[RMDB]
The data come from the RNA Mapping Database (RMDB), library OK3TST. Structure probing data (2A3 and DMS) for a 207-nucleotide construct. For 2A3, 3,164 sequencing reads were counted. DMS adducts were read by reverse transcription with MarathonRT. High DMS reactivity at an A or C suggests that its Watson-Crick edge is free. Conditions: 150 mM KOAc, 10 mM MgCl2 and 150 mM bicine (pH 8.5), 24 C.
RNA sequence: GGGAACGACUCGAGUAGAGUCGAAAACAAGAGCAAUUUGGAGGUUGACAGCAAGAUGGAGUUGAUUAGGUCAGAUUUCUUUCACUGUCAUAAUUUUGUCACUGUGAUUUUUGCAAAGGUGGUUUCACCACAAAAAGCUUUCGUGAUCUGGCCCCCAAAAUAGUAUCGGAUUCGUCCGAUACUAUUUAAAAGAAACAACAACAACAAC
Reactivity to 2A3 in 0.01 (KOAc 150mM, MgCl2 10mM, bicine 150mM(pH8.5), 24C), signal-to-noise 5, nucleotides 027 to 156: c020a020a050g010a010g040c040a060a070u030u060u110g040g010a050g030g020u020u060g020a030c030a020g030c020a040a040g020a060u080g010g010a030g030u060u050g070a090u080u180a030g030g000u030c010a000g010a040u030u070u030c050u030u100u030c020a010c040u020g030u020c030a020u060a220a250u080u250u100u100g050u040c030a020c080u040g020u010g050a060u010u070u110u150u100g030c050a090a050a070g050g000u010g010g030u030u200u300c060a030c040c010a010c010a010a130a010a010a000g010c000u030u120u180c080g020u020g020a010u000c010u030g030g000c000c000c000c000c000a010
Reactivity to DMS in 0.01 (KOAc 150mM, MgCl2 10mM, bicine 150mM(pH8.5), 24C), signal-to-noise 3, nucleotides 027 to 156: c050a050a100g010a110g010c020a030a100u000u010u000g020g010a050g020g040u010u000g020a070c040a070g020c040a080a140g020a070u000g010g010a100g020u000u000g010a090u000u010a060g020g000u010c030a090g020a120u000u000u000c020u000u010u000c040a070c050u000g010u000c030a060u010a080a100u000u000u000u020g020u000c060a060c060u000g010u000g000a110u000u000u000u010u000g010c040a040a060a070g010g030u000g020g020u000u000u010c040a080c020c000a300c030a010a020a040a060a100g010c040u000u010u000c090g000u000g010a080u000c030u000g010g020c010c000c000c010c010a070